[RMDB]
RNA sequence: GGGAACGACUCGAGUAGAGUCGAAAAAGAUGGCAGGAACCCACUCAUUGGGGUCCGCUGUUCCAUUCUUUCUUACCUUGUGGCCGGCAUGGUCCCAGCCUCCUCGCUGGCGCCGGCUGGGCAACAUCAACCCAUUAUAGUUCGCUAUAAUGGGUUGAAAAGAAACAACAACAACAAC
Reactivity to DMS in 0.01 (KOAc 150mM, MgCl2 10mM, bicine 150mM(pH8.5), 24C), signal-to-noise 2, nucleotides 027 to 126: a020g000a040u000g000g000c040a070g020g000a040a010c000c000c000a060c300u010c240a210u000u020g020g010g020g010u000c010c030g000c070u010g010u000u000c050c000a050u000u000c030u000u000u010c110u000u000a220c050c040u000u000g030u000g010g010c010c000g010g000c020a070u010g020g020u010c300c010c000a020g010c000c100u000c210c090u010c210g000c020u000g000g000c240g010c000c010g000g020c010u000g000g010g020c020a030a060c060a080u010
Reactivity to 2A3 in 0.01 (KOAc 150mM, MgCl2 10mM, bicine 150mM(pH8.5), 24C), signal-to-noise 2, nucleotides 027 to 126: a000g000a000u030g000g010c020a020g070g000a040a050c000c030c010a060c070u210c060a180u070u170g010g000g000g010u040c020c030g040c070u020g030u150u020c010c000a030u100u070c000u010u040u010c010u070u070a130c000c000u060u100g070u060g090g050c000c000g000g020c060a100u140g040g030u050c000c020c010a010g000c000c010u090c050c040u060c080g000c000u010g010g000c000g010c010c010g000g060c000u010g000g000g000c010a040a010c000a090u010

Chemical mapping of a 177-nucleotide RNA with DMS and 2A3. Reactivities are given for positions 27 through 126. It was measured as part of the RMDB library 15KREP. High 2A3 reactivity points to a flexible backbone, as in loops and unpaired stretches.